[RMDB]
RNA sequence: GGGAACGACUCGAGUAGAGUCGAAAAGUAGUGCUUGUAUUUAUGUUGGAGUGGGUGCAAUAAAUGUCCCGUCUUGAAACACGGAUCAAGGAGGCCGUUUUAUGUGCGAGUGUAAGAGUAAUUAAAACAAGACUCAACACUUCGGUGUUGAGUCUUGAAAAGAAACAACAACAACAAC
Reactivity to 2A3 in 0.01 (KOAc 150mM, MgCl2 10mM, bicine 150mM(pH8.5), 24C), signal-to-noise 1, nucleotides 027 to 126: g050u020a020g030u000g000c000u010u020g050u080a070u060u300u000a230u150g010u000u220g000g010a050g070u060g000g030g000u010g030c000a070a070u080a110a090a040u270g000u030c000c000c000g010u030c010u000u070g030a000a090a000c000a040c020g000g000a020u010c000a020a020g010g000a000g090g000c030c020g040u000u000u020u140a150u170g020u020g010c020g060a040g030u060g010u030a030a070g070a020g080u010a110a060u120u140a030a000a000a040
Reactivity to DMS in 0.01 (KOAc 150mM, MgCl2 10mM, bicine 150mM(pH8.5), 24C), signal-to-noise 1, nucleotides 027 to 126: g020u000a060g070u000g030c070u020u010g020u000a040u000u000u000a040u000g000u010u000g000g010a200g000u050g000g000g020u000g030c040a000a110u020a010a070a120u030g010u000c000c000c010g010u000c030u010u000g000a100a040a030c110a020c030g000g000a020u010c030a080a030g000g020a060g000g030c210c060g030u000u040u000u070a100u050g000u030g010c060g000a040g050u010g030u040a080a090g000a190g000u040a030a060u020u020a030a060a130a040